[RMDB]
RNA sequence: GGGAACGACUCGAGUAGAGUCGAAAAGACUAUGUGAUCUUAUUAAAAUUAGGUUAAAUCGAGGUUAAAAAUAGUUUUAAUAUUGCUAAGAGGUCUUGCGAAAGCUUACCACACAAGAUGGACCGGAGCGAAAGCUCCAAUAUCUAGUGUACCCUCGGAUGAUUGACAUCUUCGGAUGUCAAUCAUCAAAAGAAACAACAACAACAAC
Reactivity to 2A3 in 0.01 (KOAc 150mM, MgCl2 10mM, bicine 150mM(pH8.5), 24C), signal-to-noise 2, nucleotides 027 to 156: g010a010c030u060a020u210g060u040g040a090u060c000u040u090a070u050u130a140a070a070a180u080u060a080g010g010u020u080a080a070a000u100c010g010a020g010g050u040u070a030a030a000a030a190u010a020g000u000u010u040u000a100a170u080a130u070u280g000c010u050a100a000g030a030g190g000u010c000u010u040g010c020g030a130a000a000g000c000u010u020a000c010c000a000c000a030c010a010a030g010a020u010g000g000a050c180c150g000g000a020g000c020g030a120a010a000g000c010u000c040c010a000a010u020a000u020c010u010a030g010u000g000u050a030c000c010c060u020c120g010